[RMDB]
RNA sequence: GGGAACGACUCGAGUAGAGUCGAAAACAUCGUCCGUGGUUGCGAUCCGUUGGUGAAGCCCGUUGGCAGACAGGCCUGUGAUCUGCAGCCCUGCCCCACGGAGCCCCCAGGUGAGGCGCGGGGAGGCUCAUUCCUAGGAUUUCGAUCCUAGGAAUGAAAAAGAAACAACAACAACAAC
Reactivity to 2A3 in 0.01 (KOAc 150mM, MgCl2 10mM, bicine 150mM(pH8.5), 24C), signal-to-noise 6, nucleotides 027 to 126: c020a070u100c030g110u020c010c020g040u070g030g030u110u110g050c010g010a040u030c020c020g070u080u200g010g020u110g070a080a030g020c010c010c040g090u090u140g030g000c040a010g020a160c050a040g030g090c010c010u060g020u050g050a290u030c090u240g000c000a020g000c010c000c000u020g010c000c000c000c020a010c010g040g000a080g030c020c000c000c010c010a010g050g040u070g030a090g000g050c040g000c020g050g000g000g010a030g050g010c010
Reactivity to DMS in 0.01 (KOAc 150mM, MgCl2 10mM, bicine 150mM(pH8.5), 24C), signal-to-noise 9, nucleotides 027 to 126: c100a110u010c090g010u000c020c030g020u000g010g010u000u000g020c040g000a070u000c030c050g020u000u000g010g010u000g020a140a160g000c020c010c080g010u000u010g020g020c140a090g010a090c110a070g010g010c120c020u010g020u010g010a090u000c090u010g020c010a060g000c100c010c040u000g000c020c030c010c060a030c030g010g010a110g010c030c020c010c010c020a150g000g010u000g010a110g010g010c070g010c050g010g000g010g000a080g010g010c110